[RMDB]
RNA sequence: GGGAACGACUCGAGUAGAGUCGAAAAAACAGUUAACGGAGAGAACACACUGCCUGCGGGAAUUGUGGAAGGAAAUCCCUCACCACCUCCUCCACAGGACGGUGUUGGUUCCCGCGAACAGGAUGGAUCCGUAGUCGUACUUCGGUACGACUACGGAAAAAGAAACAACAACAACAAC
Reactivity to DMS in 0.01 (KOAc 150mM, MgCl2 10mM, bicine 150mM(pH8.5), 24C), signal-to-noise 1, nucleotides 027 to 126: a020a040c070a050g010u000u000a050a050c050g000g000a160g020a130g040a090a010c070a050c050a160c020u010g030c040c010u000g010c050g050g000g020a020a050u010u000g020u000g040g000a250a030g000g000a100a080a060u010c190c000c000u010c120a110c050c000a020c010c090u000c000c020u010c060c150a090c090a030g010g000a030c050g000g010u000g000u010u000g050g000u000u000c010c000c000g040c290g010a030a050c030a020g020g000a050u010g000g000a210
Chemical mapping of a 177-nucleotide RNA with DMS. The DMS profile rests on 714 reads. Values cover nucleotides 27 to 126.